Conditions: 150 mM KOAc, 10 mM MgCl2 and 150 mM bicine (pH 8.5), 24 C. This 177-nucleotide RNA was probed chemically with 2A3 and DMS. It was measured as part of the RMDB library TTRDES. For 2A3 the reverse transcriptase was SuperScript II with manganese. Values cover nucleotides 27 to 126.
RNA sequence: GGGAACGACUCGAGUAGAGUCGAAAAAAAAAGAUAUGGAAUUCGCCGUGAGCUAUGAAGUAUGCCGAGUUACAUCGGAAACGAUGUAAUAGUGCAUAUGGAGCUCGGGGAAUUCCUAAGUCAAAAACUUAUCUAUAGUGUUCGCACUAUAGAUAAGAAAAGAAACAACAACAACAAC
Reactivity to 2A3 in 0.01 (KOAc 150mM, MgCl2 10mM, bicine 150mM(pH8.5), 24C), signal-to-noise 3, nucleotides 027 to 126: a000a000a000a070a020g080a030u160a090u160g000g040a000a030u010u010c170g190c300c090g200u290g050a020g000c020u080a300u300g020a060a010g000u010a000u010g010c000c000g090a100g110u030u010a000c000a000u000c000g000g040a030a000a010c000g000a020u000g000u000a020a010u010a020g110u220g000c000a000u000a010u030g030g000a010g000c020u010c000g000g010g010g000a000a010u000u020c000c000u010a080a030g040u040c050a060a060a020a120a150
Reactivity to DMS in 0.01 (KOAc 150mM, MgCl2 10mM, bicine 150mM(pH8.5), 24C), signal-to-noise 2, nucleotides 027 to 126: a060a090a070a150a080g020a020u000a300u000g000g010a020a000u000u000c000g010c020c000g010u020g000a010g030c000u020a150u000g010a080a120g000u000a000u000g000c000c000g010a230g020u000u000a000c000a010u000c000g000g000a120a070a230c000g030a030u000g010u000a020a000u010a090g000u020g010c010a000u000a010u010g000g000a010g000c000u000c000g010g000g010g010a030a010u000u000c000c000u000a020a070g020u000c030a060a080a150a080a080